[RMDB]
RNA sequence: GGGAACGACUCGAGUAGAGUCGAAAAGCUUACUCCUAAAACUGGUACAGGUAUAGCUAUAUCUGUUAAACCAGAGAGUACAGCUGAUCAAGAGACUUAUGGUGGAGCUUCAGUGUGUCUCUAUUGCGGGAAAGAAUAUGUUCGCAUAUUCUUUCCCAAAAGAAACAACAACAACAAC
Reactivity to 2A3 in 0.01 (KOAc 150mM, MgCl2 10mM, bicine 150mM(pH8.5), 24C), signal-to-noise 1, nucleotides 027 to 126: g000c000u030u000a000c010u020c020c040u080a140a120a050a060c020u000g000g010u030a000c000a000g000g030u000a020u020a010g140c210u080a010u000a010u040c000u010g010u010u140a090a050a000c010c020a020g020a000g010a000g000u010a020c090a070g000c000u020g030a040u060c020a040a020g010a010g030a050c060u120u160a100u230g110g040u050g090g070a060g100c000u050u090c080a120g020u050g010u030g000u090c000u000c030u100a130u040u120g060c070
Reactivity to DMS in 0.01 (KOAc 150mM, MgCl2 10mM, bicine 150mM(pH8.5), 24C), signal-to-noise 3, nucleotides 027 to 126: g000c000u000u000a010c020u000c000c250u000a050a060a220a290c020u000g000g020u000a030c000a010g000g030u000a000u000a210g040c230u010a090u000a000u000c000u000g000u010u000a030a080a040c000c000a010g000a140g010a030g000u000a010c230a020g020c000u000g000a250u010c070a090a050g000a110g020a030c020u000u000a050u000g010g030u010g000g000a070g010c080u000u000c060a050g000u000g020u000g020u000c010u000c040u010a130u010u000g000c300
Record summary
This 177-nucleotide RNA was probed chemically with 2A3 and DMS. For 2A3, 886 sequencing reads were counted. For DMS the reverse transcriptase was MarathonRT. DMS (dimethyl sulfate) methylates the pairing face of unpaired adenines and cytosines.